[RMDB]
RNA sequence: GGGAACGACUCGAGUAGAGUCGAAAAGCACUCGCCGCUUAAACACCGGUGAGCCUUGCAACAGCACGCUGAUGGGCUGGGCAAGGGGGCCGCAAGGCUUCCAGGCUGCAAGGGAAUUCACAUCAGCUGGUCUGGCGCCGGGUACCUUGGCGUUGGGGCUUACAAAUACGUUCGCGUAUUUGUAAGCAAAAGAAACAACAACAACAAC
Reactivity to 2A3 in 0.01 (KOAc 150mM, MgCl2 10mM, bicine 150mM(pH8.5), 24C), signal-to-noise 1, nucleotides 027 to 156: g090c040a010c020u020c000g000c000c010g000c020u030u060a060a060a040c050a030c040c020g030g000u000g000a030g020c000c000u020u020g010c030a120a110c010a060g020c010a000c020g030c020u050g020a010u110g010g020g000c010u020g020g000g000c030a080a100g000g020g020g000g000c000c000g050c090a090a050g000g000c000u020u020c000c000a050g030g040c010u050g000c020a070a090g070g030g030a050a120u240u210c060a050c010a110u010c000a040g000c010u100g040g070u030c010u010g000g010c010g010c010c020g020g020g080u140a160c050c000u080u150g010g020c000g010u010u060g010g030g010
Reactivity to DMS in 0.01 (KOAc 150mM, MgCl2 10mM, bicine 150mM(pH8.5), 24C), signal-to-noise 1, nucleotides 027 to 156: g050c060a200c000u000c010g020c010c000g000c020u000u000a110a120a200c070a110c130c010g030g020u000g010a040g020c010c020u010u000g030c000a070a050c020a060g000c020a080c060g040c000u000g020a060u000g000g000g020c010u000g040g010g040c070a060a100g020g010g000g020g000c000c010g000c300a140a290g040g030c000u000u000c020c020a170g030g000c000u000g010c000a040a050g010g030g000a120a150u000u000c060a060c050a090u000c000a050g020c000u030g020g030u010c000u000g010g020c090g010c000c000g010g000g020u000a050c130c050u030u020g000g000c020g040u000u000g010g020g000
Record summary
Structure probing data (2A3 and DMS) for a 207-nucleotide construct. 2A3 is a SHAPE reagent: it acylates the 2'-hydroxyl of flexible nucleotides of all four kinds. The RNA was probed in 150 mM KOAc, 10 mM MgCl2 and 150 mM bicine (pH 8.5) at 24 C. It was measured as part of the RMDB library ARCHII.